Structure probing data (DMS and 2A3) for a 177-nucleotide construct. The reactions ran in a buffer of 150 mM KOAc, 10 mM MgCl2 and 150 mM bicine (pH 8.5), at 24 C. For DMS, 1,020 sequencing reads were counted.
[RMDB]
RNA sequence: GGGAACGACUCGAGUAGAGUCGAAAAAUGACUGCAUUCAGUGACGUUGCUGUAGCGUACAUUGCAAAGCGAAAUUCAGUAGAACCAUAUAUGCCGAGAUAUGGUUUACAGCGAAAUUUAACUGACAUCUUCCUAGGAUCUUCGGAUCCUAGGAAGAAAAAGAAACAACAACAACAAC
Reactivity to DMS in 0.01 (KOAc 150mM, MgCl2 10mM, bicine 150mM(pH8.5), 24C), signal-to-noise 1, nucleotides 027 to 126: a050u010g010a170c050u000g000c120a060u000u000c020a000g000u000g000a050c020g000u000u000g000c020u010g010u020a000g000c000g010u000a050c020a020u010u000g020c100a080a090a150g020c080g020a050a080a120u000u000c080a040g000u000a100g070a070a030c020c000a010u000a020u000a010u000g020c020c120g000a060g000a030u010a000u000g000g000u000u000u000a000c000a000g010c040g000a120a120a070u000u000u000a060a100c120u010g010a080c270a130
Reactivity to 2A3 in 0.01 (KOAc 150mM, MgCl2 10mM, bicine 150mM(pH8.5), 24C), signal-to-noise 1, nucleotides 027 to 126: a000u190g010a030c010u020g040c020a070u000u030c030a010g010u000g010a010c020g010u010u060g000c020u000g000u020a010g030c010g000u020a130c040a030u000u080g040c110a110a090a010g030c100g110a120a060a030u170u110c050a050g050u000a050g130a110a000c000c010a010u000a010u000a020u090g190c050c030g110a110g000a070u010a010u050g000g000u050u060u000a010c030a010g000c030g030a100a030a060u150u170u040a150a050c030u030g090a020c020a120